[RMDB]
Conditions: 150 mM KOAc, 10 mM MgCl2 and 150 mM bicine (pH 8.5), 24 C. Structure probing data (DMS and 2A3) for a 177-nucleotide construct. 2A3 is a SHAPE reagent: it acylates the 2'-hydroxyl of flexible nucleotides of all four kinds. For 2A3, 7,986 sequencing reads were counted. It was measured as part of the RMDB library TTRDES. Reactivities are given for positions 27 through 126. High DMS reactivity at an A or C suggests that its Watson-Crick edge is free.

RNA sequence: GGGAACGACUCGAGUAGAGUCGAAAAGAUAUGGAUCACUCAGAAACUCGACGAUCUAACCUCGGAAACGAGGUUAGGGAGAGUCGUUCUGAGGUGAUCCUAAGUCAAAAGUGCAGUUCGCUGCACACAUAAGUUGCGAGUUCGCUCGCAACUUAUGAAAAGAAACAACAACAACAAC
Reactivity to DMS in 0.01 (KOAc 150mM, MgCl2 10mM, bicine 150mM(pH8.5), 24C), signal-to-noise 4, nucleotides 027 to 126: g010a090u010a300u010g010g000a020u000c000a050c000u010c010a010g000a030a170a060c040u000c020g000a090c230g000a040u000c000u010a010a000c000c010u010c000g030g000a160a120a200c000g010a010g000g000u000u000a000g020g020g000a070g010a040g020u000c210g020u000u000c000u000g000a020g010g020u000g010a010u000c000c000u000a010a080g010u000c050a080a060a120a100g020u000g010c000a010g010u000u020c270g000c020u000g000c010a000c010a170
Reactivity to 2A3 in 0.01 (KOAc 150mM, MgCl2 10mM, bicine 150mM(pH8.5), 24C), signal-to-noise 3, nucleotides 027 to 126: g050a010u100a050u190g010g000a000u000c010a010c010u010c000a010g030a020a040a040c030u070c040g300a300c010g020a300u010c000u010a000a010c010c000u010c010g000g030a120a080a050c010g040a000g000g000u010u000a000g000g000g000a020g000a000g010u080c130g200u040u010c000u000g020a030g040g130u030g010a000u000c000c000u010a040a010g030u020c040a050a000a120a100g010u000g000c000a010g010u040u170c210g090c150u000g000c000a000c000a000